RNA sequence: GGGAACGACUCGAGUAGAGUCGAAAACGAAACCGGGCGACCUCAUCCUCGACCCGUUUGCCGGAAGCGGUUCCACGCUGGUCGCGGCGAAGAAGACGGGGCGUCGCUUCAUUGGCAUCGAGCUGGAUGACGAUUACUUCGUCACGGCCCAGCGGCGACCGUACUGCGUAUUCGUACGCAGUACGGUAAAAGAAACAACAACAACAAC
Reactivity to 2A3 in 0.01 (KOAc 150mM, MgCl2 10mM, bicine 150mM(pH8.5), 24C), signal-to-noise 1, nucleotides 027 to 156: c110g050a110a000a000c020c020g040g000g030c000g030a100c000c040u150c070a150u110c000c010u050c020g110a260c000c000c000g000u010u040u100g070c030c000g040g000a060a060g100c000g090g020u030u150c110c010a080c010g000c000u030g000g000u070c000g000c000g170g000c000g020a110a000g020a000a000g070a060c050g000g000g000g000c010g080u050c070g020c000u170u170c060a140u100u220g000g040c020a020u170c120g070a070g030c020u020g120g000a130u020g020a020c040g020a000u150u280a110c090u070u010c000g020u000c010a000c010g060g000c050c000c000a000g000c020g010g000c030g020